[RMDB]
RNA sequence: GGGAACGACUCGAGUAGAGUCGAAAAGCAGUAAAGAAGCAGAUGCAAGUGAAAAUAGUGUUACGCAAUCUGAUAGCGCAAGUAACGAAAGCAAAAGUAAUGAUUCAAGUAGCGUUAGUGCUGCACCACUUCUUACGACGUUCGCGUCGUAAGAAGUAAAAGAAACAACAACAACAAC
Reactivity to DMS in 0.01 (KOAc 150mM, MgCl2 10mM, bicine 150mM(pH8.5), 24C), signal-to-noise 2, nucleotides 027 to 126: g000c010a000g050u020a040a050a100g000a220a130g020c010a050g010a010u010g000c020a030a120g000u000g000a000a060a130a010u030a140g040u000g000u030u000a030c100g000c120a060a110u000c020u000g000a100u000a050g000c000g020c060a030a080g000u020a100a080c220g000a070a030a100g010c100a040a010a090a170g000u010a050a030u010g000a120u030u010c100a050a160g020u000a090g000c070g010u000u030a180g010u070g040c020u040g000c000a180c010c010
Reactivity to 2A3 in 0.01 (KOAc 150mM, MgCl2 10mM, bicine 150mM(pH8.5), 24C), signal-to-noise 3, nucleotides 027 to 126: g000c000a000g010u060a020a180a030g120a080a010g050c000a000g000a030u050g020c040a150a050g030u080g150a040a030a070a080u170a050g110u060g050u290u070a040c010g000c000a020a240u060c010u000g020a040u070a030g000c050g020c000a000a100g050u130a050a040c070g050a160a050a030g120c020a060a010a000a160g150u080a010a190u240g220a090u000u080c100a150a000g000u020a000g060c000g000u020u060a030g020u050g000c000u020g020c000a000c030c000